Overview: Source: RMDB library RFM100, as collected in RNAgym. Chemical mapping of a 177-nucleotide RNA with 2A3 and DMS. For 2A3 the reverse transcriptase was SuperScript II with manganese. For DMS the reverse transcriptase was MarathonRT. For 2A3, 1,476 sequencing reads were counted. The reactions ran in a buffer of 150 mM KOAc, 10 mM MgCl2 and 150 mM bicine (pH 8.5), at 24 C.

RNA sequence: GGGAACGACUCGAGUAGAGUCGAAAACGCCCGAUUUCGGUCAAUUCCCCGCCCUUGUGGACUGCGAUCAAGUCUCUACUGCGUUGACCCGGUCCUUUCGGCACCGGAUUCCUCAGCCCCCAGCCCCAGUUCAUUCAAGCUUCGGCUUGAAUGAACUAAAAGAAACAACAACAACAAC
Reactivity to 2A3 in 0.01 (KOAc 150mM, MgCl2 10mM, bicine 150mM(pH8.5), 24C), signal-to-noise 2, nucleotides 027 to 126: c090g020c010c000c000g100a080u080u110u190c050g000g000u020c020a070a100u100u110c000c000c010c030g000c000c020c010u030u070g010u070g060g010a040c030u050g010c050g040a060u060c080a090a020g050u000c000u000c000u040a060c030u050g070c040g090u030u040g100a070c040c000c030g040g000u020c020c000u050u220u090c090g020g010c020a000c030c000g020g000a000u010u000c000c000u020c010a010g020c000c030c010c000c000a010g010c000c000c000c000
Reactivity to DMS in 0.01 (KOAc 150mM, MgCl2 10mM, bicine 150mM(pH8.5), 24C), signal-to-noise 1, nucleotides 027 to 126: c300g060c000c020c020g010a130u040u010u000c060g050g040u050c050a220a120u000u000c080c000c020c010g000c090c030c090u010u040g000u000g010g000a060c060u000g000c070g020a110u040c010a040a120g060u030c000u000c030u010a010c010u000g020c150g030u000u000g000a180c120c040c030g000g030u000c070c050u000u020u010c030g000g010c150a020c000c040g010g000a200u010u010c010c000u000c000a220g010c000c020c020c000c040a150g020c000c000c010c090